The record gives the reactivity of an RNA of 177 nucleotides to 2A3 and DMS. For 2A3, 4,224 sequencing reads were counted. For DMS, 3,448 sequencing reads were counted.
RNA sequence: GGGAACGACUCGAGUAGAGUCGAAAAACAGAACGUGCUAGCGGCCGCCACCAAGAGAAACUGCAACGUCACGCAAAUGCGAGAACUACCCACCAUGGACUCGGCAGUGUUCAACGUGGAGUGCUUCUCUCAACAUCAGAUUCGUCUGAUGUUGAGAAAAAGAAACAACAACAACAAC
Reactivity to 2A3 in 0.01 (KOAc 150mM, MgCl2 10mM, bicine 150mM(pH8.5), 24C), signal-to-noise 3, nucleotides 027 to 126: a000c030a020g060a100a030c020g060u050g040c040u040a040g030c010g030g010c010c020g000c020c020a050c020c010a080a010g090a010g040a080a070a030c030u040g000c010a060a050c030g060u040c030a020c070g020c030a000a120a150u160g000c020g010a040g010a060a010c030u100a060c030c010c000a010c010c020a110u110g010g000a010c030u010c000g100g040c060a030g010u020g040u110u050c010a020a020c060g010u020g000g040a100g040u030g020c050u110u000c040
Reactivity to DMS in 0.01 (KOAc 150mM, MgCl2 10mM, bicine 150mM(pH8.5), 24C), signal-to-noise 4, nucleotides 027 to 126: a100c090a100g010a070a090c050g030u000g010c030u000a100g010c050g020g010c050c050g000c020c020a050c050c040a040a080g010a130g000a050a070a060c060u000g000c040a070a090c190g000u010c030a110c070g010c050a090a050a080u000g020c030g010a050g010a040a040c090u000a090c040c010c020a020c050c150a220u000g000g010a060c010u000c070g000g000c100a080g010u010g000u010u010c040a050a140c120g000u010g000g000a080g010u000g010c120u000u000c040
Conditions: 150 mM KOAc, 10 mM MgCl2 and 150 mM bicine (pH 8.5), 24 C.